[RMDB]
Background:
Structure probing data (2A3 and DMS) for a 177-nucleotide construct. For 2A3, 44,335 sequencing reads were counted. The RNA was probed in 150 mM KOAc, 10 mM MgCl2 and 150 mM bicine (pH 8.5) at 24 C.
RNA sequence: GGGAACGACUCGAGUAGAGUCGAAAAACCGCAUCGGAAGGUCAUGCGCUGUUCGACAAGCCUGUGAUAGUUUCGAUGGGAGCGGUAUGGCUGCGUAGGUUGCCUAUGGCGAGAAUCCAUCACAAGAACCUUCUACUAUAUUCGUAUAGUAGAAGGUAAAAGAAACAACAACAACAAC
Reactivity to 2A3 in 0.01 (KOAc 150mM, MgCl2 10mM, bicine 150mM(pH8.5), 24C), signal-to-noise 9, nucleotides 027 to 126: a000c020c010g000c020a020u020c010g020g020a030a020g080g010u020c010a020u050g010c020g000c040u040g050u180u200c080g120a070c080a100a020g020c000c010u040g000u010g020a030u030a100g300u010u010u040c020g000a010u030g020g050g040a040g030c040g030g040u100a080u090g060g000c020u040g000c040g050u070a080g050g090u090u090g040c000c010u060a080u070g090g000c020g000a040g060a060a030u010c020c010a040u070c040a030c020a110a060g080a080
Reactivity to DMS in 0.01 (KOAc 150mM, MgCl2 10mM, bicine 150mM(pH8.5), 24C), signal-to-noise 9, nucleotides 027 to 126: a090c020c010g010c040a040u000c020g010g010a030a030g000g010u000c020a030u000g010c300g010c020u000g010u010u010c190g020a120c180a110a060g010c010c010u000g020u000g000a030u000a060g010u000u000u000c020g010a040u000g010g010g010a100g020c030g010g010u000a050u010g010g010c030u000g010c040g010u010a070g010g010u000u000g010c020c020u000a050u000g010g010c030g000a110g000a110a100u000c020c010a060u010c110a090c180a090a120g010a110